[RMDB]
Background: An RNA of 207 nucleotides, treated with 2A3 and read out base by base. It was measured as part of the RMDB library M2RFPK. For 2A3, 592 sequencing reads were counted.
RNA sequence: GGGAACGACUCGAGUAGAGUCGAAAAUCAAGCAAAACCCCAAAACCUUACACUGAGAGCAUUUAGCCAGAUUACUCUUUAAAUCAAAUCAGGCAAUAGAGAGAAACUCGAGAGGUGAAAACCCCACAUAACGAUCUAGGCUUCGGCCUAGAUCGAACGUUACUGUUUCGUUCGCGAAACAGUAACGAAAAGAAACAACAACAACAAC
Reactivity to 2A3 in 0.01 (KOAc 150mM, MgCl2 10mM, bicine 150mM(pH8.5), 24C), signal-to-noise 2, nucleotides 027 to 156: u070c000a000a020g040c020a040a010a180a290c000c050c040c000a100a080a010a010c000c090u110u170a120c070a100c160u140g080a000g000a000g060c020a040u030u060u220a050g030c020c020a000g010a060u050u090a050c010u030c000u180u200u140a080a070a060u130c040a060a030a060u030c000a020g000g000c020a040a040u110a020g090a000g010a000g040a050a190a040c020u000c000g070a070g020a020g000g000u000g010a030a020a050a000c010c000c040c000a100c020a060u290a150a020c030g000a000u000c010u020a000g000g010c000u010u120c200g110g010c020c000u000a000g000a000u000c000g000a000a000